[RMDB]
RNA sequence: GGGAACGACUCGAGUAGAGUCGAAAAUCAGCGUGUUAGCCAGUUCGGUAUUAUGCCAAAUCAGCCGGGCAUUAUUUAAAGGCGUAGGGGAAAGUGCUGUAUAGGUUUCUGGCAAUUCAUCGCGCCACCCUGGUAAAUGAUUCGUCAUUUACCAGGGAAAAGAAACAACAACAACAAC
Reactivity to 2A3 in 0.01 (KOAc 150mM, MgCl2 10mM, bicine 150mM(pH8.5), 24C), signal-to-noise 2, nucleotides 027 to 126: u040c000a000g010c000g000u020g010u070u130a020g000c000c010a030g000u010u070c020g010g000u030a100u160u070a070u190g030c000c000a030a030a110u070c030a020g050c000c000g030g030g000c020a010u040u110a090u070u170u110a040a060a020g020g000c060g020u080a110g020g020g000g040a020a060a080g020u030g050c010u020g060u050a080u070a090g150g010u030u100u020c020u010g020g000c000a010a020u090u050c050a060u100c090g020c020g030c060c000a060
Reactivity to DMS in 0.01 (KOAc 150mM, MgCl2 10mM, bicine 150mM(pH8.5), 24C), signal-to-noise 3, nucleotides 027 to 126: u010c060a100g000c050g040u000g000u000u000a170g020c020c020a070g010u000u000c080g010g010u000a040u020u010a050u020g000c020c020a040a090a100u000c080a080g000c050c050g000g000g000c070a030u020u000a050u010u010u010a070a050a130g000g010c020g040u000a080g000g000g000g000a050a090a080g010u000g010c030u000g000u020a070u000a200g010g000u000u000u000c020u000g000g000c020a080a080u000u010c130a020u000c100g010c090g020c030c030a180